An RNA of 207 nucleotides, treated with DMS and 2A3 and read out base by base. For DMS, 3,048 sequencing reads were counted. The data come from the RNA Mapping Database (RMDB), library OK3TST. DMS adducts were read by reverse transcription with MarathonRT.
RNA sequence: GGGAACGACUCGAGUAGAGUCGAAAAACUCGAACGAACGUGUACGAACGUGAACGUGUGUACGUACACUCGAGAGAGAGAGAUCGAGUGUACGUUCACUCUCGAUCGUGUUCGAGAGUGUGUGUGUACGAACGUGAACGUACGAACUCUCUCACGACCAAGGGCAGUAAUUCGUUACUGCCCUUGGAAAAGAAACAACAACAACAAC
Reactivity to DMS in 0.01 (KOAc 150mM, MgCl2 10mM, bicine 150mM(pH8.5), 24C), signal-to-noise 2, nucleotides 027 to 156: a030c010u000c000g010a230a160c090g000a120a120c050g030u000g040u040a120c030g010a060a130c010g010u020g010a100a020c050g020u000g040u000g010u000a040c050g010u000a010c000a000c010u010c000g030a070g000a150g000a080g000a010g010a020g000a230u000c000g000a070g020u000g030u000a000c050g020u000u000c000a020c000u000c000u000c020g000a000u000c300g030u010g070u000u000c020g010a040g020a050g010u000g020u010g030u000g000u000g050u000a030c020g040a040a150c040g060u000g000a070a170c000g020u000a070c060g000a050a160c010u000c000u010c000u000c000a110c060g000a190
Reactivity to 2A3 in 0.01 (KOAc 150mM, MgCl2 10mM, bicine 150mM(pH8.5), 24C), signal-to-noise 3, nucleotides 027 to 156: a000c020u020c020g070a100a080c030g040a090a020c050g050u050g040u130a020c010g020a180a010c000g010u030g060a120a040c030g030u080g020u030g040u120a010c000g010u000a000c000a000c000u010c000g000a010g010a010g000a000g000a000g000a000g000a050u000c000g000a000g000u010g000u000a010c000g000u020u010c000a000c000u000c000u000c000g070a090u030c070g070u130g070u230u040c030g000a000g000a000g020u020g000u010g000u020g020u040g020u080a020c030g030a150a010c020g040u080g050a100a040c000g010u030a010c030g010a060a050c000u000c000u010c000u010c020a020c020g100a040
Reactivities are given for positions 27 through 156.